[RMDB]
RNA sequence: GGGAACGACUCGAGUAGAGUCGAAAACAUCACCGAUGGCACUAAAAACAUCCGCACCACGGUCGCGUCCAGCAGCAGCGCCGCCAUCAGUCCAAAGGCCAGAUACUUCAUCAUCACCAGGUCGGAGGUUCUCUUGGUGUUUCGACACCAAGAGAACAAAAGAAACAACAACAACAAC
Reactivity to 2A3 in 0.01 (KOAc 150mM, MgCl2 10mM, bicine 150mM(pH8.5), 24C), signal-to-noise 3, nucleotides 027 to 126: c040a030u090c030a020c030c010g050a070u050g040g000c040a020c160u170a060a050a000a050a000c030a060u050c010c020g020c020a030c030c000a040c050g090g020u040c050g000c010g060u020c010c010a040g010c040a020g000c010a010g030c030g000c010c040g000c010c000a020u060c050a010g050u020c020c010a070a070a050g040g000c010c010a020g010a090u100a100c030u070u040c030a080u030c000a010u030c010a030c040c000a030g020g050u030c010g030g040a050g080
Reactivity to DMS in 0.01 (KOAc 150mM, MgCl2 10mM, bicine 150mM(pH8.5), 24C), signal-to-noise 2, nucleotides 027 to 126: c080a150u010c000a080c000c000g000a170u030g020g030c110a000c060u050a040a120a000a170a040c130a140u000c010c020g000c020a170c050c100a120c120g000g000u090c100g030c080g000u000c000c000a100g030c050a150g070c020a010g020c060g000c040c020g020c030c010a030u010c110a090g010u030c020c030a060a120a010g000g050c050c100a130g000a090u030a050c060u020u000c000a050u010c100a020u000c020a030c080c020a020g000g000u000c080g010g010a150g000